[RMDB]
RNA sequence: GGGAACGACUCGAGUAGAGUCGAAAAGCUGCGUGACAAGUACAUUUAUGAGCCAAAGAGUCGAUGGGUACACCCUAUUGACAACGUCGCAUACUUUGGCCCUUAUGUAAUGAUGGUGUGUGACGAGAGCUCCAUCCUCGUUCGCGAGGAUGGAGCUAAAAGAAACAACAACAACAAC
Reactivity to 2A3 in 0.01 (KOAc 150mM, MgCl2 10mM, bicine 150mM(pH8.5), 24C), signal-to-noise 1, nucleotides 027 to 126: g030c010u030g010c040g030u030g130a000c030a110a070g090u110a040c000a000u060u070u240a210u110g000a020g000c000c000a010a000a000g130a000g000u000c000g060a000u000g010g010g000u080a100c000a160c190c000c010u030a000u020u000g000a090c000a080a030c150g010u070c000g010c020a020u030a050c000u000u000u060g000g000c020c000c050u110u050a010u030g010u010a120a040u150g130a050u190g000g050u130g030u010g000u010g030a000c000g000a020g000
Chemical mapping of a 177-nucleotide RNA with 2A3. Reactivities are given for positions 27 through 126. For 2A3 the reverse transcriptase was SuperScript II with manganese. For 2A3, 516 sequencing reads were counted. It was measured as part of the RMDB library OK1LIB. The reactions ran in a buffer of 150 mM KOAc, 10 mM MgCl2 and 150 mM bicine (pH 8.5), at 24 C.